[RMDB]
RNA sequence: GGGAACGACUCGAGUAGAGUCGAAAAGAAAAGAGCCGCAAGCGCUGAUAUGCGCAAUACCGUAACCGCGGCACGGUACACCGGCAAGCCAUCUAAGAGAGCCGGUGAUAGAUGGCAUACAAAAAAAUCUGUAAUACUAGUUCGCUAGUAUUACAGAAAAAGAAACAACAACAACAAC
Reactivity to DMS in 0.01 (KOAc 150mM, MgCl2 10mM, bicine 150mM(pH8.5), 24C), signal-to-noise 3, nucleotides 027 to 126: g000a130a090a120a200g010a210g010c000c010g020c030a130a140g010c010g020c020u000g010a150u010a050u000g000c000g010c000a110a100u010a020c000c010g000u000a080a120c040c030g010c020g000g040c030a010c000g020g010u010a080c100a120c050c000g010g000c010a150a140g010c010c020a030u000c020u000a030a090g000a170g010a220g030c000c000g000g000u000g000a050u010a040g010a020u000g010g000c000a170u000a080c170a010a000a030a080a020a080a070
Reactivity to 2A3 in 0.01 (KOAc 150mM, MgCl2 10mM, bicine 150mM(pH8.5), 24C), signal-to-noise 2, nucleotides 027 to 126: g070a010a170a030a020g080a050g010c030c030g050c180a170a100g000c030g030c040u080g120a220u120a080u300g000c010g000c000a010a050u040a020c020c010g020u010a080a050c010c050g000c010g010g000c000a000c000g000g000u020a030c020a010c020c000g020g000c050a080a010g010c000c010a020u010c030u130a140a010g080a020g000a030g150c020c020g000g010u000g000a000u020a020g020a010u040g010g010c050a030u110a150c190a060a130a010a010a000a000a060

This 177-nucleotide RNA was probed chemically with DMS and 2A3. The 2A3 profile rests on 2,493 reads. The data come from the RNA Mapping Database (RMDB), library M2PK90. The DMS profile rests on 2,516 reads. Conditions: 150 mM KOAc, 10 mM MgCl2 and 150 mM bicine (pH 8.5), 24 C.